[RMDB]
RNA sequence: GGGAACGACUCGAGUAGAGUCGAAAAGAUAUGGACCAGGUACCAACGAAGAACUAUAUCGGAAACGAUAUAGGGAGUUGAGUACUGGUCCUAAGUCAAAACACAUUAUUCUUCGGAAUAAUGUGAACGUCAUUUAGAGGUUCGCCUCUAAAUGACGAAAAGAAACAACAACAACAAC
Reactivity to DMS in 0.01 (KOAc 150mM, MgCl2 10mM, bicine 150mM(pH8.5), 24C), signal-to-noise 2, nucleotides 027 to 126: g010a010u000a300u010g010g030a010c020c000a020g000g000u010a050c010c000a060a000c060g000a070a170g010a130a240c000u000a000u000a000u010c000g000g000a160a160a210c020g000a010u000a000u000a000g000g010g000a060g060u000u000g000a070g050u000a050c010u000g020g000u000c000c000u000a000a060g000u000c020a100a110a120a140c000a000c000a010u000u000a000u000u000c010u010u010c300g050g000a000a050u000a000a010u000g000u000g000a020a120
Reactivity to 2A3 in 0.01 (KOAc 150mM, MgCl2 10mM, bicine 150mM(pH8.5), 24C), signal-to-noise 2, nucleotides 027 to 126: g030a040u080a030u190g020g000a000c000c010a050g130g260u100a040c030c000a020a030c020g300a300a090g030a050a000c010u000a000u000a000u000c000g000g050a070a100a050c000g000a000u020a000u000a000g040g010g000a030g000u030u090g020a100g010u030a050c000u000g000g010u000c000c000u010a030a000g020u000c030a020a000a170a060c000a000c000a010u010u000a000u010u000c000u070u040c300g130g020a000a030u000a000a010u010g000u020g020a040a020
This 177-nucleotide RNA was probed chemically with DMS and 2A3. The 2A3 profile rests on 3,971 reads. The reactions ran in a buffer of 150 mM KOAc, 10 mM MgCl2 and 150 mM bicine (pH 8.5), at 24 C.